[RMDB]
RNA sequence: GGGAACGACUCGAGUAGAGUCGAAAAGAAUAUAAGAGCGCAGUAAUUGUGAGAGCAAACUGCGCCCGGACUGUAGGAUCCGGUGGCACAGCAACGCUCAUUCACAAAACGCUGUGCCACUUGAAGAGGAUAGUAUCAGUUUCGACUGAUACUAUCCAAAAGAAACAACAACAACAAC
Reactivity to 2A3 in 0.01 (KOAc 150mM, MgCl2 10mM, bicine 150mM(pH8.5), 24C), signal-to-noise 9, nucleotides 027 to 126: g030a060a030u180a010u060a120a040g040a010g000c010g000c000a000g010u090a200a150u050u010g020u020g070a090g000a000g040c010a000a020a060c000u000g000c000g000c000c000c010g000g010a020c040u140g090u230a060g060g080a080u000c010c010g000g000u010g000g000c000a000c000a000g000c010a020a100c080g040c050u060c060a100u300u200c070a040c050a090a090a030a020c110g000c000u000g000u000g000c010c000a000c000u060u090g030a060a020g080a050
Reactivity to DMS in 0.01 (KOAc 150mM, MgCl2 10mM, bicine 150mM(pH8.5), 24C), signal-to-noise 4, nucleotides 027 to 126: g010a160a100u040a080u020a050a060g000a140g000c020g000c000a030g030u010a070a070u010u010g020u000g020a220g000a160g000c000a040a080a060c010u000g000c010g010c000c020c000g010g000a040c080u030g010u010a080g010g020a180u000c010c020g010g000u000g010g010c000a000c000a010g010c000a130a100c210g000c090u000c090a080u030u030c220a100c240a030a020a080a080c190g000c000u000g010u000g000c020c000a030c010u010u000g040a060a120g010a240